[RMDB]
RNA sequence: GGGAACGACUCGAGUAGAGUCGAAAAAUCUGACCUGGUCAAUGGAUUUCGUCAUGGAUGCACUGGCCACCGGUCGCAGGAUCAAGUGCCUUACCUGCGUCGAUGACUUCACAAAGGAAUGCCUGACUCUCAAAGCUAGUUUCGACUAGCUUUGAGAAAAAGAAACAACAACAACAAC
Reactivity to DMS in 0.01 (KOAc 150mM, MgCl2 10mM, bicine 150mM(pH8.5), 24C), signal-to-noise 4, nucleotides 027 to 126: a070u010c070u010g030a100c030c040u010g000g020u000c030a070a070u000g010g010a070u000u000u000c140g010u010c100a040u010g010g000a030u000g010c030a030c060u010g010g000c050c040a070c120c120g010g010u010c020g020c210a050g000g000a030u000c050a100a150g000u000g010c030c040u000u010a130c230c060u000g000c030g020u000c020g010a030u000g000a050c020u010u000c100a070c170a050a130a100g000g000a060a030u010g000c020c020u000g000a090c120
Reactivity to 2A3 in 0.01 (KOAc 150mM, MgCl2 10mM, bicine 150mM(pH8.5), 24C), signal-to-noise 3, nucleotides 027 to 126: a000u040c080u090g030a040c010c010u060g040g050u040c040a050a090u120g070g030a090u120u060u150c070g010u050c030a040u100g060g020a010u030g040c020a000c060u010g020g000c020c010a030c050c060g000g000u080c020g000c050a020g000g130a010u050c090a060a090g030u050g190c000c000u050u080a120c020c010u010g030c020g000u030c010g070a020u030g020a010c000u060u050c130a070c050a090a140a030g060g030a060a050u030g110c000c000u030g020a050c000
Annotation
An RNA of 177 nucleotides, treated with DMS and 2A3 and read out base by base. The DMS profile rests on 3,183 reads. Values cover nucleotides 27 to 126. Conditions: 150 mM KOAc, 10 mM MgCl2 and 150 mM bicine (pH 8.5), 24 C.